[RMDB]
About this RNA: Structure probing data (2A3 and DMS) for a 177-nucleotide construct. DMS adducts were read by reverse transcription with MarathonRT. For 2A3 the reverse transcriptase was SuperScript II with manganese. For 2A3, 4,415 sequencing reads were counted. The reactions ran in a buffer of 150 mM KOAc, 10 mM MgCl2 and 150 mM bicine (pH 8.5), at 24 C.
RNA sequence: GGGAACGACUCGAGUAGAGUCGAAAAGAUAUGGAUCCCAGUAGGGAGCUCCAUAUCGGAAACGAUAUGUGAGCAUCGAUCUACGGGAUCCUAAGUCAAAAGUCUGGAACGUUCGCGUUCCAGACAAGUCUACAAUGAGGUUCGCCUCAUUGUAGACAAAAGAAACAACAACAACAAC
Reactivity to 2A3 in 0.01 (KOAc 150mM, MgCl2 10mM, bicine 150mM(pH8.5), 24C), signal-to-noise 1, nucleotides 027 to 126: g000a010u030a020u040g000g010a010u000c000c000c020a020g000u000a000g000g070g090a090g000c000u010c000c000a000u000a010u000c000g000g000a000a010a000c000g010a020u010a000u010g300u250g050a000g000c000a000u300c070g060a110u010c000u000a020c040g000g020g010a010u000c000c000u000a000a010g000u000c020a140a000a140a160g010u000c000u000g000g000a000a000c000g040u080u090c220g020c000g190u000u030c000c020a010g000a010c000a010a000
Reactivity to DMS in 0.01 (KOAc 150mM, MgCl2 10mM, bicine 150mM(pH8.5), 24C), signal-to-noise 1, nucleotides 027 to 126: g010a010u000a000u010g000g000a000u010c000c010c000a160g040u000a000g000g000g000a080g010c000u000c010c000a010u000a000u010c000g030g010a010a010a020c010g000a000u000a000u000g010u010g020a010g020c000a290u000c290g010a030u020c010u000a020c000g010g030g000a010u000c010c000u010a000a070g000u010c010a130a120a090a120g010u000c000u000g010g000a010a010c000g040u000u040c290g020c010g000u000u000c000c000a000g010a000c020a010a070